[RMDB]
RNA sequence: GGGAACGACUCGAGUAGAGUCGAAAAUUAUCAUGACCCUGAUACUUCAUGGUUAAAAGGAAGAUAUAGUGGCACUGGUUGGGAUACUGCAUUUGGUUUUGCAGGUGCAACACCUAGUAUGUAUAGAGAGUGGGUGUUGGCAGCAUAUGAGUUAAUGCAGACCGUAUACUUUCGAGUAUACGGUCUGAAAAGAAACAACAACAACAAC
Reactivity to 2A3 in 0.01 (KOAc 150mM, MgCl2 10mM, bicine 150mM(pH8.5), 24C), signal-to-noise 2, nucleotides 027 to 156: u090u030a050u090c050a040u100g020a020c000c000c000u000g050a070u050a200c080u120u100c040a040u100g000g000u100u140a030a180a000a060g090g000a010a040g040a050u030a010u050a160g060u050g000g010c010a030c120u010g000g000u030u080g000g000g040a020u040a080c010u020g060c000a030u020u030u020g070g000u050u040u020u040g000c000a030g040g060u040g000c000a030a020c000a000c020c000u000a060g030u040a090u160g130u010a040u050a080g100a040g010a000g100u140g000g040g010u030g040u040u010g050g030c000a040g030c010a010u050a030u190g070a100g030u010u100a090a040u190g030
Reactivity to DMS in 0.01 (KOAc 150mM, MgCl2 10mM, bicine 150mM(pH8.5), 24C), signal-to-noise 1, nucleotides 027 to 156: u020u010a030u000c040a070u020g040a040c020c020c000u010g040a170u000a060c040u000u010c030a060u010g030g050u000u000a040a080a090a110g000g000a080a050g000a150u000a100u000a070g030u000g010g010c010a100c040u010g010g020u000u000g000g030g000a090u000a060c000u000g040c030a090u000u020u030g020g010u000u010u010u000g010c050a080g020g070u000g020c020a060a050c020a040c020c000u020a080g040u020a030u000g000u020a120u000a180g000a050g010a130g040u000g020g010g030u010g000u000u000g000g040c030a070g000c020a080u000a040u000g030a210g010u000u000a080a080u010g000
An RNA of 207 nucleotides, treated with 2A3 and DMS and read out base by base. Values cover nucleotides 27 to 156.